[RMDB]
RNA sequence: GGGAACGACUCGAGUAGAGUCGAAAAGAUAUGGAUCGCGACGGGAGCUCUUUGCACUCGGAAACGAGUGCUUUGAGCUUUGAUCGUCAGCGAUCCUAAGUCAAACCCGUUAGUUCGCUAACGGGAAGGACCUAUAUUAGUUCGCUAAUAUAGGUCCAAAAGAAACAACAACAACAAC
Reactivity to 2A3 in 0.01 (KOAc 150mM, MgCl2 10mM, bicine 150mM(pH8.5), 24C), signal-to-noise 3, nucleotides 027 to 126: g020a020u090a020u180g000g000a000u010c010g010c000g010a000c010g020g000g010a000g010c010u000c000u000u030u010g010c000a000c000u010c000g010g010a000a070a040c020g010a000g000u000g000c000u000u010u000g000a000g010c010u030u010u010g030a030u030c000g010u010c050a000g000c010g000a000u000c000c000u000a010a010g050u020c040a110a050a120c000c000c000g000u000u000a010g010u040u050c300g000c220u010a000a000c010g010g010g010a010a100
Reactivity to DMS in 0.01 (KOAc 150mM, MgCl2 10mM, bicine 150mM(pH8.5), 24C), signal-to-noise 5, nucleotides 027 to 126: g010a060u000a300u010g000g000a000u000c000g030c000g010a010c000g010g010g010a000g030c010u000c000u000u000u000g010c000a010c000u000c000g000g010a090a090a230c010g020a030g020u000g010c000u010u000u000g010a010g030c010u000u010u010g000a090u030c010g010u000c000a100g040c000g010a010u000c000c010u000a010a100g020u000c030a130a130a220c000c000c010g000u000u010a000g010u000u010c280g010c000u000a010a010c000g000g010g010a040a030

An RNA of 177 nucleotides, treated with 2A3 and DMS and read out base by base.
It was measured as part of the RMDB library TTRDES.
The DMS profile rests on 9,282 reads.
The RNA was probed in 150 mM KOAc, 10 mM MgCl2 and 150 mM bicine (pH 8.5) at 24 C.